[RMDB]
RNA sequence: GGGAACGACUCGAGUAGAGUCGAAAAGGGGUCUCGCAGACAUGGGAUGUAGAGCUUUUGACGCUCUGAAGCCUCCACGGAGCGAUAAGCUCUAUGCAUCCCAACAGCUGCGAGACGGAGGCACCCAAAGGAAGUUCGUGUUCGCACGAACUUCCAACGCAUCUCUACAGUUCGCUGUAGAGAUGCGAAAAGAAACAACAACAACAAC
Reactivity to 2A3 in 0.01 (KOAc 150mM, MgCl2 10mM, bicine 150mM(pH8.5), 24C), signal-to-noise 1, nucleotides 027 to 156: g050g000g080g000u000c000u000c000g030c000a000g060a140c080a300u300g000g010g000a020u040g050u070a110g000a000g050c030u140u130u170u150g120a090c030g000c000u040c000u000g010a030a020g080c000c010u070c000c010a030c010g000g000a000g020c000g010a020u040a200a000g000c000u000c000u010a080u190g030c010a000u010c000c000c000a000a030c000a020g000c000u000g000c000g000a000g000a000c000g030g000a000g000g000c010a040c010c000c010a090a040a050g000g000a000a000g000u000u010c000g000u010g020u080u100c230g030c120a000c000g000a000a000c010u030u000c000c000a000a000